[RMDB]
RNA sequence: GGGAACGACUCGAGUAGAGUCGAAAAGAGGGGGGUCAUGGUCCAUCAGGGGCUGCGAUUAGGUUUGAUGGACCUCAUGGUCAGCCAGGAGGUGGAAUCAGAUUUGAGGGCCCUUUGCUACAGCAAAGCCAUUAGUGACUUUCGAGUCACUAAUGGCAAAAGAAACAACAACAACAAC
Reactivity to DMS in 0.01 (KOAc 150mM, MgCl2 10mM, bicine 150mM(pH8.5), 24C), signal-to-noise 2, nucleotides 027 to 126: g000a110g020g010g010g020g010g010u010c030a100u000g000g020u000c000c000a010u010c050a140g050g000g030g020c010u010g040c060g010a070u000u000a040g030g000u000u010u010g020a140u030g000g000a030c000c010u000c090a040u000g010g000u020c060a070g010c010c030a130g010g010a190g000g020u000g000g010a070a080u000c050a080g010a160u000u000u000g030a150g000g000g000c020c020c020u000u000u010g000c050u010a060c190a110g000c120a010a080a140
Source: RMDB library OK2TST, as collected in RNAgym. Chemical mapping of a 177-nucleotide RNA with DMS. Values are in units of 0.01, from 0 to 300, in steps of 10. The reactions ran in a buffer of 150 mM KOAc, 10 mM MgCl2 and 150 mM bicine (pH 8.5), at 24 C.